[RMDB]
RNA sequence: GGGAACGACUCGAGUAGAGUCGAAAAUUACCUACACCGGCACUGCUUUCGGGAAUUACACGCUGAAUGUAACACGGACCAAGAGGGUCACACGAACGAACAUAAUAUGAUGGUACCAACGGUAGGGCUGUAAGCGAGAUUUCGAUCUCGCUUACAGAAAAGAAACAACAACAACAAC
Reactivity to DMS in 0.01 (KOAc 150mM, MgCl2 10mM, bicine 150mM(pH8.5), 24C), signal-to-noise 2, nucleotides 027 to 126: u000u010a160c000c000u010a130c100a110c090c060g010g000c020a050c110u000g000c050u000u000u010c120g000g000g040a150a120u000u010a010c060a060c020g020c100u020g000a080a060u010g040u030a060a070c070a100c010g020g000a060c050c030a040a160g010a100g000g000g000u000c050a050c070a200c090g050a110a070c150g000a080a130c030a050u010a070a030u000a110u000g000a080u000g000g010u000a040c060c070a020a090c130g010g000u010a020g000g000g030
Reactivity to 2A3 in 0.01 (KOAc 150mM, MgCl2 10mM, bicine 150mM(pH8.5), 24C), signal-to-noise 2, nucleotides 027 to 126: u080u060a060c000c000u020a020c040a040c050c040g040g030c020a000c050u040g060c000u050u100u090c030g050g000g120a050a070u190u090a020c080a000c090g070c070u030g050a150a040u070g040u000a040a010c010a010c110g000g030a020c000c000a130a090g050a080g240g030g050u020c020a000c010a000c140g090a100a020c040g050a040a020c070a030u180a270a080u110a140u200g130a020u120g010g020u040a040c000c020a050a040c100g030g020u070a050g060g030g030